[RMDB]
An RNA of 177 nucleotides, treated with 2A3 and DMS and read out base by base.
It was measured as part of the RMDB library OK2TRN.
For 2A3 the reverse transcriptase was SuperScript II with manganese.
The reactions ran in a buffer of 150 mM KOAc, 10 mM MgCl2 and 150 mM bicine (pH 8.5), at 24 C.
For DMS the reverse transcriptase was MarathonRT.
RNA sequence: GGGAACGACUCGAGUAGAGUCGAAAAUGGGCAGGCAUAGGUCCUAGGAGAUGGCUUUCCCCAGGAGUCCUUGUACCUGGAAGUCUUAAGAAGACAGACAAGUGGGCAUCUCAGCCAUUACCUGGAGGACCAGGAAUCUAUUCGUAGAUUCCUGGUCAAAAGAAACAACAACAACAAC
Reactivity to 2A3 in 0.01 (KOAc 150mM, MgCl2 10mM, bicine 150mM(pH8.5), 24C), signal-to-noise 1, nucleotides 027 to 126: u070g020g030g040c010a000g020g000c050a050u100a200g140g000u010c000c000u010a050g010g020a090g000a020u060g050g000c000u060u030u060c000c000c000c000a010g010g030a000g070u070c050c010u150u120g090u080a140c040c020u000g060g020a070a000g000u000c010u070u030a190a090g150a060a000g020a100c040a000g050a010c010a010a100g030u090g000g020g050c020a070u020c030u000c040a020g010c000c010a030u060u050a080c020c000u020g060g090a120g030
Reactivity to DMS in 0.01 (KOAc 150mM, MgCl2 10mM, bicine 150mM(pH8.5), 24C), signal-to-noise 2, nucleotides 027 to 126: u010g020g010g000c030a060g000g020c110a130u000a120g030g010u010c030c000u000a080g010g000a300g000a020u010g000g010c050u000u000u010c030c030c000c170a140g010g010a140g010u000c040c020u000u000g000u010a040c070c090u000g000g010a160a140g020u000c010u000u000a110a150g020a170a090g010a040c000a030g000a280c100a040a120g010u010g000g000g000c090a090u020c040u000c100a110g000c010c010a040u000u000a140c050c010u000g000g000a140g010